About this RNA: The record gives the reactivity of an RNA of 207 nucleotides to 2A3. The reactions ran in a buffer of 150 mM KOAc, 10 mM MgCl2 and 150 mM bicine (pH 8.5), at 24 C. For 2A3 the reverse transcriptase was SuperScript II with manganese.
[RMDB]
RNA sequence: GGGAACGACUCGAGUAGAGUCGAAAAAGAGCUUUGCGAGACCUACCAAGGGUGAAGAGAUACCAUCCAUGGAGCUGAAGAGAAAUCUCACUUUAGACGCCUGGGGAACUCGGACUAAAUUAAAAAAAAAACAUCAACCCGUUCGCGGGUUGAUGAACAUAAUAGAUUCGUUCGCGAAUCUAUUAUGAAAAGAAACAACAACAACAAC
Reactivity to 2A3 in 0.01 (KOAc 150mM, MgCl2 10mM, bicine 150mM(pH8.5), 24C), signal-to-noise 1, nucleotides 027 to 156: a010g060a020g030c040u170u090u090g010c070g000a060g030a090c010c010u020a090c040c010a060a150g060g000g000u060g010a150a020g030a010g000a050u110a200c020c000a010u020c010c000a070u120g000g000a050g020c050u060g050a080a000g000a050g040a050a050a120u060c060u040c030a050c020u180u130u100a140g030a170c090g100c080c020u030g000g000g000g020a000a020c030u030c040g050g010a050c080u140a050a070a160u270u270a080a010a050a000a000a000a000a000a000a000c000a000u000c010a010a000c010c000c010g010u030u020c180g000c000g090g010g040u000u000g000a000u000g000a000a000